[RMDB]
RNA sequence: GGGAACGACUCGAGUAGAGUCGAAAAGACAAGUGCUUCGGCACUUGUCAAAUAAGCAAGUAGAAAUGGCCAAACUACAUGCAUCGAAAGAAAGGCCAUAUAAAACUGUCCAGUUCGCUGGACAGAACUAUCAUUAUAGGUUCGCCUAUAAUGAUAGAAAAGAAACAACAACAACAAC
Reactivity to 2A3 in 0.01 (KOAc 150mM, MgCl2 10mM, bicine 150mM(pH8.5), 24C), signal-to-noise 9, nucleotides 027 to 126: g000a000c000a000a010g010u010g010c010u060u120c210g060g000c010a000c000u000u010g000u000c000a000a000a000u020a010a010g000c010a060a030g000u000a010g020a020a050a010u020g010g000c000c000a020a030a010c010u010a010c010a020u040g020c000a130u150c150g160a140a130a090g140a100a150a030g060g000c020c000a000u010a000u000a010a020a000a030c000u010g000u000c000c000a000g000u030u090c130g060c070u000g000g000a000c000a000g000a000a010
Reactivity to DMS in 0.01 (KOAc 150mM, MgCl2 10mM, bicine 150mM(pH8.5), 24C), signal-to-noise 6, nucleotides 027 to 126: g000a020c000a010a000g010u000g020c010u000u010c220g030g020c000a010c000u000u010g010u010c000a020a070a070u010a100a130g010c020a040a060g010u000a010g010a010a010a020u000g020g000c000c010a210a160a040c000u000a010c010a100u000g020c000a140u020c140g000a100a110a120g000a070a120a100g010g010c000c000a070u020a040u010a050a080a100a130c010u000g010u000c000c000a010g010u000u010c220g020c010u010g000g000a010c000a000g010a050a100

This 177-nucleotide RNA was probed chemically with 2A3 and DMS. High 2A3 reactivity points to a flexible backbone, as in loops and unpaired stretches. High DMS reactivity at an A or C suggests that its Watson-Crick edge is free. For DMS the reverse transcriptase was MarathonRT. The DMS profile rests on 10,349 reads.